[RMDB]
RNA sequence: GGGAACGACUCGAGUAGAGUCGAAAAGUCAUGCCUUCGGGCAUGACAGGUACCGAGAGGUACCAAAUAGCGUACAGUAGACACAGACUGUACGCUAAAAAAGUGUGUGUUCAAUAAGGGCCAAUUGAACACACACUAAAAUGGCCCAAGUGUGUGACGAUAUUUACCUGUUCGCAGGUAAAUAUCGAAAAGAAACAACAACAACAAC
Reactivity to 2A3 in 0.01 (KOAc 150mM, MgCl2 10mM, bicine 150mM(pH8.5), 24C), signal-to-noise 3, nucleotides 027 to 156: g000u000c010a000u000g010c000c000u050u070c230g070g010g030c000a000u000g000a000c000a000g010g000u000a000c000c010g020a030g010a020g080g000u010a010c000c000a040a050a030u080a000g000c000g010u010a000c010a000g030u040a010g060a140c050a010c040a080g090a010c000u000g000u010a000c000g000c000u000a000a010a000a000a000a010g000u000g000u000g010u000g010u000u000c040a030a010u090a170a210g080g050g000c040c030a040a030u000u030g000a000a000c010a000c000a000c000a000c000u000a000a000a000a010u100g050g010c040c010c040a030a040g110u050g000u010g000u010g030a030

Record summary
Chemical mapping of a 207-nucleotide RNA with 2A3. The data come from the RNA Mapping Database (RMDB), library OK3TST.